Chemical mapping of a 177-nucleotide RNA with DMS and 2A3. Reactivities are rounded to 0.1 and cut off at 0 and 3. The RNA was probed in 150 mM KOAc, 10 mM MgCl2 and 150 mM bicine (pH 8.5) at 24 C.
[RMDB]
RNA sequence: GGGAACGACUCGAGUAGAGUCGAAAAGUUCAAGGCCUAUCUGAAGUUCAGACUUCAACUUAGACUUACUGCCUAUGCAACCACUGACCGUGUAUCUCCCAAAUGCUCCGGUCUCUCCAUUUGGGAAAAAUGCUGGGCAUUUCGAUGCCCAGCAUUUAAAAGAAACAACAACAACAAC
Reactivity to DMS in 0.01 (KOAc 150mM, MgCl2 10mM, bicine 150mM(pH8.5), 24C), signal-to-noise 1, nucleotides 027 to 126: g000u000u000c060a060a070g010g030c060c000u030a050u000c080u000g000a000a070g000u000u000c150a210g000a070c000u010u010c010a060a080c010u000u030a040g000a060c030u000u000a000c050u000g000c030c000u000a080u100g000c100a190a190c060c040a110c030u010g000a130c080c000g070u000g000u000a100u030c080u000c000c000c000a040a040a060u040g010c060u030c160c050g000g030u010c020u000c020u000c030c080a000u010u020u000g020g010g010a000a010
Reactivity to 2A3 in 0.01 (KOAc 150mM, MgCl2 10mM, bicine 150mM(pH8.5), 24C), signal-to-noise 3, nucleotides 027 to 126: g080u130u140c040a020a010g000g050c000c010u100a100u040c020u080g040a040a030g070u090u110c100a080g150a240c000u040u010c020a040a080c050u050u070a010g010a100c030u070u090a070c040u050g020c000c000u060a150u170g020c020a040a050c020c000a040c060u050g030a040c060c020g010u010g030u160a120u080c050u030c020c020c000a000a060a010u040g010c020u000c040c000g070g000u000c040u000c000u000c030c020a080u070u030u100g000g020g050a000a140